An RNA of 207 nucleotides, treated with 2A3 and DMS and read out base by base. The reactions ran in a buffer of 150 mM KOAc, 10 mM MgCl2 and 150 mM bicine (pH 8.5), at 24 C. Source: RMDB library ARCHII, as collected in RNAgym. Reactivities are given for positions 27 through 156. In probing experiments dimethyl sulfate is read out at A N1 and C N3, which are open when not base-paired.
RNA sequence: GGGAACGACUCGAGUAGAGUCGAAAAAAAUUUACAACAUAACGUCCCAGGCAUCGACUCCCAUUGAUGCCUAGUCCGGCUAUAGCUUACUUGUGCUUGCUAUAGUUAGCUCUCUAGAAGAGUGUAAGGGCAACACGUCUGGAUGCGGGGAACUCUCGUCUAUUCAUAUCUUCGGAUAUGAAUAGACAAAAGAAACAACAACAACAAC
Reactivity to 2A3 in 0.01 (KOAc 150mM, MgCl2 10mM, bicine 150mM(pH8.5), 24C), signal-to-noise 3, nucleotides 027 to 156: a000a020a020u290u250u130a100c090a160a050c050a070u110a120a040c040g040u010c000c010c040a010g000g000c000a000u010c010g050a060c060u030c020c030c000a020u030u120g010a000u010g020c000c000u000a000g000u010c020c030g020g020c000u010a000u000a000g010c020u070u110a060c030u240u240g080u160g200c050u090u060g010c000u010a000u000a000g000u010u030a020g000c000u020c000u010c030u090a120g040a170a000g030a300g020u050g020u060a040a080g000g000g000c000a010a010c060a020c050g060u030c050u050g140g000a020u070g040c040g000g040g000g020a030a050c020u060c010u040c090
Reactivity to DMS in 0.01 (KOAc 150mM, MgCl2 10mM, bicine 150mM(pH8.5), 24C), signal-to-noise 1, nucleotides 027 to 156: a100a000a030u030u000u020a130c070a050a080c060a090u000a110a070c040g040u000c020c000c030a120g030g020c020a000u010c000g000a120c140u010c010c030c040a300u010u000g010a030u000g030c020c000u000a020g020u000c030c020g030g000c020u000a030u010a030g000c000u010u010a020c000u020u020g040u000g040c030u000u010g020c010u010a030u000a010g020u000u030a070g010c000u000c000u000c040u000a140g010a160a040g020a030g020u030g040u010a090a100g120g000g020c000a080a080c020a010c010g000u000c040u000g010g030a050u000g000c050g030g020g010g000a140a110c000u000c030u010c090